[RMDB]
RNA sequence: GGGAACGACUCGAGUAGAGUCGAAAAACGGCUGGCUACGGCCAGCCGAAUCGGGCCAAAGGCAGUCGCCCGACGACACAGGCGAUCGCUCGCCCAAGCGCUGCACACGACUAUACGUAGUCGUGAAUUGAUCACGCAACCUUCGGGUUGCGUGAAACAAAUAAGGUAUGUUCGCAUACCUUAUUUGAAAAGAAACAACAACAACAAC
Reactivity to DMS in 0.01 (KOAc 150mM, MgCl2 10mM, bicine 150mM(pH8.5), 24C), signal-to-noise 1, nucleotides 027 to 156: a140c010g000g010c000u000g030g040c020u000a130c260g090g030c010c000a010g170c060c000g030a010a000u010c030g030g000g000c000c050a070a070a120g020g030c020a060g000u010c070g040c020c030c020g000a050c060g010a170c060a100c080a080g000g060c000g010a030u010c130g000c060u010c080g040c010c000c030a130a130g010c080g010c010u030g080c010a300c020a080c000g020a040c010u000a120u000a210c260g030u000a020g030u000c000g060u000g010a020a080u000u000g010a190u000c010a030c000g010c000a080a010c010c000u000u010c270g000g040g010u010u010g020c000g000u000g000a000a030a150
Reactivity to 2A3 in 0.01 (KOAc 150mM, MgCl2 10mM, bicine 150mM(pH8.5), 24C), signal-to-noise 2, nucleotides 027 to 156: a000c010g010g000c010u030g030g010c020u070a090c300g160g010c000c000a000g060c020c000g000a000a010u020c000g000g010g010c020c090a130a140a090g090g000c000a010g010u070c020g000c030c000c010g000a020c050g030a000c020a000c020a140g090g000c030g020a060u120c060g050c090u030c010g000c000c020c000a020a020g010c020g000c040u050g020c020a000c000a000c040g000a000c000u020a010u070a110c260g160u040a000g000u000c000g010u000g000a010a010u100u140g090a030u020c020a000c030g000c000a020a000c000c000u070u060c190g050g000g000u000u000g000c010g000u000g010a010a000a000